This 177-nucleotide RNA was probed chemically with DMS and 2A3.
Source: RMDB library OK2TST, as collected in RNAgym.
[RMDB]
RNA sequence: GGGAACGACUCGAGUAGAGUCGAAAAUGGUAGGGAGGAAAACACCACUGAAAUAGUUCAGACCGUAUUGUCAGUGAAUUCCUGGAUUAGUAUGCAGUGCUGCCAAUGAUCAGAUUUGGGUCAGGAAGAAGUUCCUCUGAUUCGUCAGAGGAACUUCAAAAGAAACAACAACAACAAC
Reactivity to DMS in 0.01 (KOAc 150mM, MgCl2 10mM, bicine 150mM(pH8.5), 24C), signal-to-noise 2, nucleotides 027 to 126: u000g020g000u020a080g000g000g000a050g040g000a030a050a080a120c140a110c100c020a040c050u000g000a020a080a090u010a060g010u010u000c090a080g020a130c140c080g030u000a030u000u000g010u000c020a030g030u010g000a090a150u000u000c070c020u010g000g000a090u000u000a040g000u000a050u000g020c070a020g000u000g030c050u000g010c040c060a080a090u020g010a070u010c080a070g010a130u000u000u000g000g000g010u000c050a040g000g000a070a090
Reactivity to 2A3 in 0.01 (KOAc 150mM, MgCl2 10mM, bicine 150mM(pH8.5), 24C), signal-to-noise 1, nucleotides 027 to 126: u120g060g000u070a040g000g000g010a000g050g040a050a000a020a060c080a020c000c010a020c010u050g040a040a030a020u090a030g090u000u120c080a040g040a070c060c000g010u020a030u040u150g150u040c010a020g070u040g090a060a030u090u000c000c000u000g090g010a040u060u080a050g050u100a030u080g120c000a000g060u020g140c000u000g000c000c000a010a080u100g010a010u040c020a030g090a160u040u130u220g090g030g000u050c040a050g080g000a030a110